[RMDB]
RNA sequence: GGGAACGACUCGAGUAGAGUCGAAAAUGACAUUAAUUGAAAAUAAUAUACCUUUCUACCAAACAACAACAUCUGAAAUAAGUAUUUCAUACGUCAUUGAUGAUUUUAAUGGGCAACAAGCGGUAGACUAUGAACGACGAUUCGUCGUCGUUCAUAGAAAAGAAACAACAACAACAAC
Reactivity to 2A3 in 0.01 (KOAc 150mM, MgCl2 10mM, bicine 150mM(pH8.5), 24C), signal-to-noise 1, nucleotides 027 to 126: u060g030a030c000a000u070u120a100a130u250u110g020a050a110a040a080u150a060a100u150a040u110a250c000c010u010u060u000c040u030a020c000c000a080a000a140c010a020a000c010a020a000c010a080u000c010u020g010a000a000a110u080a040a100g010u020a050u000u180u070c050a030u050a100c000g030u020c030a020u010u010g000a010u010g000a000u160u000u000u070a140a040u080g050g000g000c020a060a050c010a010a110g070c020g040g030u000a000g010a010
Reactivity to DMS in 0.01 (KOAc 150mM, MgCl2 10mM, bicine 150mM(pH8.5), 24C), signal-to-noise 2, nucleotides 027 to 126: u020g000a120c050a040u010u010a110a150u010u000g010a050a080a090a120u000a060a080u000a090u000a230c050c020u000u000u000c020u000a030c020c000a110a090a150c060a020a060c060a070a050c070a060u000c000u000g020a030a030a060u010a180a110g010u010a050u010u010u000c100a080u000a020c100g020u000c120a040u010u000g000a080u000g000a050u010u000u010u000a020a080u010g010g000g000c090a020a030c140a030a080g000c090g020g010u000a050g020a070
Source: RMDB library OK2TST, as collected in RNAgym. The record gives the reactivity of an RNA of 177 nucleotides to 2A3 and DMS. 2A3 adducts were read by reverse transcription with SuperScript II with manganese. As a SHAPE reagent, 2A3 marks flexible, mostly unpaired nucleotides at the ribose 2'-OH. In probing experiments dimethyl sulfate is read out at A N1 and C N3, which are open when not base-paired. The 2A3 profile rests on 763 reads. The RNA was probed in 150 mM KOAc, 10 mM MgCl2 and 150 mM bicine (pH 8.5) at 24 C.